[RMDB]
RNA sequence: GGGAACGACUCGAGUAGAGUCGAAAAGGGGUCGCUCUUGUCAGAUCGUGAACACAGGCGAGGAUCUAUGGCUGAAGCCUCCACGGCCAUAGGGAGCCUGUGAACGAUCUUGGAUUUAGAGCGACGGAGGCACCCAAAACGCGUCUUCGGACGCGAAGAGAUCGGUAUUGUUCGCAAUACCGAUCUCAAAAGAAACAACAACAACAAC
Reactivity to 2A3 in 0.01 (KOAc 150mM, MgCl2 10mM, bicine 150mM(pH8.5), 24C), signal-to-noise 1, nucleotides 027 to 156: g090g000g020g000u000c000g000c010u000c000u000u010g020u020c070a100g010a010u000c000g010u010g150a300a050c010a020c010a010g010g010c020g050a300g040g010a000u010c000u000a000u010g000g000c000u050g060a180a000g020c000c000u040c000c000a000c030g010g000c000c000a010u010a000g000g000g000a000g000c040c000u000g010u010g000a010a000c000g000a000u040c020u070u220g020g000a010u120u200u090a010g010a010g000c000g000a000c000g000g000a000g040g010c010a060c060c000c000a030a110a090a080c030g000c000g020u010c000u040u070c300g090g010a000c000g000c000g000a070a020